The data come from the RNA Mapping Database (RMDB), library OK2TRN. Chemical mapping of a 177-nucleotide RNA with DMS and 2A3. For 2A3 the reverse transcriptase was SuperScript II with manganese. The reactions ran in a buffer of 150 mM KOAc, 10 mM MgCl2 and 150 mM bicine (pH 8.5), at 24 C.
RNA sequence: GGGAACGACUCGAGUAGAGUCGAAAAUGAUAGAUGUUAUACGAUAAUGCGAAAUAACUAAUAGUCAGUUGUGCCGUUACCUGCUUAAAGUACCGAUAAUUAACUAUCUCGUAUUCGGAAUAACCGACCAUAGAGAAAGUUUCGACUUUCUCUAUGGAAAAGAAACAACAACAACAAC
Reactivity to DMS in 0.01 (KOAc 150mM, MgCl2 10mM, bicine 150mM(pH8.5), 24C), signal-to-noise 6, nucleotides 027 to 126: u010g010a140u010a060g000a150u010g010u000u000a020u000a060c040g000a120u010a070a060u000g000c010g010a030a060a030u000a040a060c070u010a040a080u010a160g010u000c040a050g010u000u010g010u000g010c070c030g000u010u000a050c070c060u000g010c090u010u020a050a070a100g010u000a040c040c030g010a050u010a070a050u000u010a040a080c060u000a030u000c050u000c030g010u000a060u010u000c010g000g010a130a070u000a050a080c020c060g020a160
Reactivity to 2A3 in 0.01 (KOAc 150mM, MgCl2 10mM, bicine 150mM(pH8.5), 24C), signal-to-noise 4, nucleotides 027 to 126: u190g040a070u090a110g090a060u090g020u040u030a040u020a060c020g000a030u050a130a040u180g020c000g040a070a020a060u120a060a030c060u080a040a080u030a060g050u010c040a020g020u060u030g030u100g060c010c000g010u020u040a020c000c010u050g070c060u180u150a070a120a030g010u020a070c000c020g030a040u030a100a020u090u040a030a030c020u010a030u070c020u030c050g040u060a120u040u050c010g020g030a140a050u030a070a050c000c030g040a040